[RMDB]
RNA sequence: GGGAACGACUCGAGUAGAGUCGAAAAAGAGGCUGCGACGACGACGUCACCGGCUGUGGCGGGUCCGCCAGCUGGGAGAGUUCAACCACAGACUGCUGUGCUAGCUUGACGGGGAAUGCUGGGAGAGCGCCGGAUAAUUAUUCGUAAUUAUCCGGCGAAAAGAAACAACAACAACAAC
Reactivity to 2A3 in 0.01 (KOAc 150mM, MgCl2 10mM, bicine 150mM(pH8.5), 24C), signal-to-noise 4, nucleotides 027 to 126: a000g100a040g020g000c030u040g010c030g050a050c010g000a010c030g030a050c030g060u020c000a020c020c040g150g000c100u150g000u020g060g000c000g000g000g060u050c030c040g000c020c000a000g010c010u020g010g030g010a150g010a010g010u110u090c060a080a070c030c000a000c020a050g110a150c080u110g000c030u030g150u060g030c020u040a040g020c010u040u050g020a020c040g000g000g000g030a080a080u100g010c030u030g020g020g000a100g000a020g020
Reactivity to DMS in 0.01 (KOAc 150mM, MgCl2 10mM, bicine 150mM(pH8.5), 24C), signal-to-noise 3, nucleotides 027 to 126: a080g000a080g010g010c000u020g020c040g030a090c090g020a060c060g000a110c050g000u000c000a080c040c110g040g010c100u020g000u020g000g020c010g000g010g000u000c040c070g040c060c000a040g000c020u000g020g010g000a070g000a210g020u010u000c080a090a130c120c020a050c040a050g020a240c120u030g000c040u010g020u000g010c050u020a070g000c050u020u010g000a080c050g000g000g000g040a100a110u010g000c040u030g000g010g020a120g020a070g030
The record gives the reactivity of an RNA of 177 nucleotides to 2A3 and DMS. DMS adducts were read by reverse transcription with MarathonRT. It was measured as part of the RMDB library OK1LIB. For 2A3 the reverse transcriptase was SuperScript II with manganese. The RNA was probed in 150 mM KOAc, 10 mM MgCl2 and 150 mM bicine (pH 8.5) at 24 C. The DMS profile rests on 4,741 reads.